[RMDB]
RNA sequence: GGGAACGACUCGAGUAGAGUCGAAAAUUGUUACCUCUAUACCAUUGUGUAUAGUACCUUACACUGCAUUGUACUAUUAUGCUACAUUCUAUUUUACUAAUGAGCCUGCAUUUAUUAUGCAUGUUUCCCCGGCGUAUGUUCGCAUACGCCAAAAGAAACAACAACAACAAC
Reactivity to DMS in 0.01 (KOAc 150mM, MgCl2 10mM, bicine 150mM(pH8.5), 24C), signal-to-noise 6, nucleotides 027 to 129: u030u040g020u030u050a040c060c030u000c020u020a030u020a000c100c050a190u060u050g010u070g030u050a040u020a020g020u020a000c130c080u050u020a070c040a080c190u030g010c040a030u000u000g020u000a060c180u040a070u050u020a000u000g020c020u010a080c090a050u000u000c150u040a080u050u040u030u030a080c070u040a000a080u020g000a040g000c090c030u000g040c050a050u000u050u020a020u040u060a000u010g020c030a030u000g030u030u010u060c030c020c030c300
Reactivity to 2A3 in 0.01 (KOAc 150mM, MgCl2 10mM, bicine 150mM(pH8.5), 24C), signal-to-noise 7, nucleotides 027 to 129: u060u050g040u040u030a080c010c030u000c000u030a010u000a010c030c070a230u190u220g050u030g010u190a000u000a000g000u040a050c000c030u030u060a050c030a090c110u050g020c030a050u030u070g040u050a000c010u030a050u130u050a040u070g030c020u020a060c020a060u020u060c020u040a140u050u160u030u060a110c080u060a050a160u060g020a000g030c010c030u050g000c030a010u010u050u030a090u150u060a020u060g010c020a010u050g040u000u020u030c030c010c000c040
An RNA of 170 nucleotides, treated with DMS and 2A3 and read out base by base. As a SHAPE reagent, 2A3 marks flexible, mostly unpaired nucleotides at the ribose 2'-OH. The data come from the RNA Mapping Database (RMDB), library 15KLIB. The RNA was probed in 150 mM KOAc, 10 mM MgCl2 and 150 mM bicine (pH 8.5) at 24 C.